This 177-nucleotide RNA was probed chemically with DMS. The data come from the RNA Mapping Database (RMDB), library OK2TRN. Conditions: 150 mM KOAc, 10 mM MgCl2 and 150 mM bicine (pH 8.5), 24 C. For DMS, 664 sequencing reads were counted.
RNA sequence: GGGAACGACUCGAGUAGAGUCGAAAACAUAACGGAUCCUGCAAGCCUGCAGGUUUCCAGAGGGAAGGGGACUUGUGCCUCCUUGCUUCGUACCUACCGCAGCCCACGGCUCACAGCAGGCGAGGGAGCUAGGGAAGGCUUUCGAGCCUUCCCUAGCAAAAGAAACAACAACAACAAC
Reactivity to DMS in 0.01 (KOAc 150mM, MgCl2 10mM, bicine 150mM(pH8.5), 24C), signal-to-noise 1, nucleotides 027 to 126: c130a090u000a160a100c230g000g000a160u000c000c000u040g000c010a110a080g000c120c120u010g010c010a090g020g000u000u000u000c000c010a100g010a060g000g040g060a010a000g000g000g020g020a090c000u010u000g030u000g010c000c010u030c010c020u000u000g010c000u000u000c010g020u000a100c110c010u000a080c070c140g010c120a200g000c000c000c130a240c020g000g020c050u010c060a090c040a050g010c070a030g000g000c010g000a150g010g010g000a120